[RMDB]
RNA sequence: GGGAACGACUCGAGUAGAGUCGAAAAGGACUACAGCGAUGGUUUUGGGGGAAAGUUCGGAGUGCAAGAGGAUCGCAAGGACAAGUCUGCCGUGGGCUGGGACCACGUCGAAAAGGUCGAGAAGCACAUAUAACUCACAAUUCGUUGUGAGUUAUAUAAAAGAAACAACAACAACAAC
Reactivity to DMS in 0.01 (KOAc 150mM, MgCl2 10mM, bicine 150mM(pH8.5), 24C), signal-to-noise 9, nucleotides 027 to 126: g010g010a090c040u010a090c110a080g010c080g010a070u000g010g010u000u000u000u000g020g000g010g010g000a060a070a080g010u000u000c080g010g010a100g020u010g010c070a070a090g000a100g010g010a060u000c070g010c090a080a090g000g000a060c090a060a100g010u000c060u000g010c060c030g020u000g000g000g010c050u000g010g010g000a070c030c020a040c060g010u000c050g000a050a050a090a080g010g010u000c030g010a090g010a070a100g010c090a060c160
Reactivity to 2A3 in 0.01 (KOAc 150mM, MgCl2 10mM, bicine 150mM(pH8.5), 24C), signal-to-noise 6, nucleotides 027 to 126: g030g010a020c020u070a050c090a050g020c030g110a090u060g020g040u070u110u140u120g030g010g010g000g020a040a060a030g020u050u050c040g040g030a070g020u060g020c020a050a040g030a040g110g020a040u040c030g000c100a050a060g040g010a020c010a050a050g050u000c030u060g040c030c020g030u050g020g040g000c050u090g010g000g020a010c020c010a030c040g060u040c000g020a080a030a030a050g040g010u020c030g000a010g010a090a010g030c030a000c030